The data come from the RNA Mapping Database (RMDB), library TTRDES. This 177-nucleotide RNA was probed chemically with DMS and 2A3. The RNA was probed in 150 mM KOAc, 10 mM MgCl2 and 150 mM bicine (pH 8.5) at 24 C. High 2A3 reactivity points to a flexible backbone, as in loops and unpaired stretches. Values cover nucleotides 27 to 126. For 2A3 the reverse transcriptase was SuperScript II with manganese.
[RMDB]
RNA sequence: GGGAACGACUCGAGUAGAGUCGAAAAGAUAUGGACCAAUCCCAGGGAGUUACUCUCGGAAACGAGAGAAUAACAUCGAUCUGGAUUGGUCCUAAGUCAAAGACAUGUAAGUUCGCUUACAUGUCAACACUCUACGCUACUUCGGUAGCGUAGAGUGAAAAGAAACAACAACAACAAC
Reactivity to DMS in 0.01 (KOAc 150mM, MgCl2 10mM, bicine 150mM(pH8.5), 24C), signal-to-noise 1, nucleotides 027 to 126: g010a010u010a190u000g000g000a010c000c000a020a000u000c220c040c180a040g000g000g000a080g020u000u000a010c000u000c010u010c000g000g010a010a030a160c000g010a000g000a030g010a070a060u000a030a000c030a190u000c270g020a170u010c040u000g000g000a030u000u010g000g000u000c000c000u000a000a070g000u010c020a100a070a090g010a000c010a000u030g030u000a010a000g020u000u000c290g050c010u000u000a010c000a000u000g000u000c000a090a140
Reactivity to 2A3 in 0.01 (KOAc 150mM, MgCl2 10mM, bicine 150mM(pH8.5), 24C), signal-to-noise 2, nucleotides 027 to 126: g000a000u010a000u060g000g010a000c010c000a020a010u110c230c080c040a030g120g100g070a130g000u000u000a000c000u000c000u000c000g000g020a040a000a020c020g000a000g020a020g090a110a300u220a030a000c060a040u300c170g300a220u000c000u020g000g010a000u000u010g010g000u000c000c010u000a010a000g010u020c000a060a050a000g020a000c000a000u020g020u000a000a060g010u010u230c300g020c150u010u010a010c010a010u000g010u010c000a010a000